[RMDB]
RNA sequence: GGGAACGACUCGAGUAGAGUCGAAAAUCCUUUAGUUUCCUUCCUCUCCUGGAGAGGUCUUCUGCCCUAGCCCGGUCUUCGAAGCUUCCUUUGGCUACUACCCGGUGGAAACAACUGAAGCUUCAACGCCUUUUUUUCCAAUCUUCUUUAGCACCGGCCCUGUUUAUGAGUUCGCUCAUAAACAGGGAAAAGAAACAACAACAACAAC
Reactivity to 2A3 in 0.01 (KOAc 150mM, MgCl2 10mM, bicine 150mM(pH8.5), 24C), signal-to-noise 1, nucleotides 027 to 156: u080c020c000u050u160u080a150g000u050u040u040c020c000u060u140c010c000u020c000u070c020c130u110g030g120a060g020a040g040g000u020c030u110u010c070u070g010c030c000c010u040a040g000c000c010c000g030g060u000c040u110u080c160g020a000a040g010c020u000u000c000c020u010u030u010g090g000c040u050a000c030u040a020c000c010c020g020g000u030g000g030a090a150a060c000a010a010c030u020g040a050a040g020c000u000u030c040a010a010c050g040c020c020u060u020u050u060u060u120u150c050c030a120a140u040c030u040u000c000u010u200u200a050g030c010a020c020c030g040g010

This 207-nucleotide RNA was probed chemically with 2A3. The 2A3 profile rests on 514 reads.